[RMDB]
RNA sequence: GGGAACGACUCGAGUAGAGUCGAAAAUCCCACAACAUGUGGGAAUUCAAGAUGAGAUUUGUUACCAUAUCAGUUACCAACCCUUCCAGAUAAAUCACGUGAAAUAUCGCCAUUAACAGAGUGAGCUCAGGUGGUUCUUCAGUGCAUUUCUGAUACCCAUACGAAUACGAUUCGUCGUAUUCGUAUGAAAAGAAACAACAACAACAAC
Reactivity to 2A3 in 0.01 (KOAc 150mM, MgCl2 10mM, bicine 150mM(pH8.5), 24C), signal-to-noise 9, nucleotides 027 to 156: u000c000c040c010a000c000a020a020c030a070u210g000u020g000g010g040a060a050u120u150c080a080a040g080a150u170g020a030g030a100u060u050u050g040u060u060a040c020c020a020u040a080u140c040a040g040u060u090a070c020c040a050a070c030c000c020u070u030c030c010a010g010a040u080a050a070a020u070c030a020c130g110u080g060a040a030a020u120a050u070c030g000c020c010a060u100u090a090a060c050a090g040a010g110u090g050a000g040c020u010c040a020g010g030u020g010g010u050u020c020u050u030c010a020g010u010g050c030a040u040u090u030c010u010g020a050u100a090c030c040
Reactivity to DMS in 0.01 (KOAc 150mM, MgCl2 10mM, bicine 150mM(pH8.5), 24C), signal-to-noise 4, nucleotides 027 to 156: u000c000c010c010a090c050a130a140c150a100u000g040u000g010g010g020a080a060u010u000c040a090a150g010a100u000g010a100g010a110u000u000u000g000u000u000a070c050c020a090u000a080u010c040a110g020u010u000a090c040c010a080a070c050c020c070u020u000c060c020a160g010a070u000a050a060a100u000c030a050c040g010u000g000a070a060a150u000a060u000c030g020c010c030a100u000u000a080a130c090a100g010a100g000u000g000a040g040c070u000c050a040g020g040u000g000g020u000u010c040u000u000c030a080g040u000g030c060a160u000u010u000c030u000g010a090u000a110c100c050

The record gives the reactivity of an RNA of 207 nucleotides to 2A3 and DMS.
For DMS the reverse transcriptase was MarathonRT.
The data come from the RNA Mapping Database (RMDB), library OK3TST.
2A3 adducts were read by reverse transcription with SuperScript II with manganese.
Reactivities are given for positions 27 through 156.
Conditions: 150 mM KOAc, 10 mM MgCl2 and 150 mM bicine (pH 8.5), 24 C.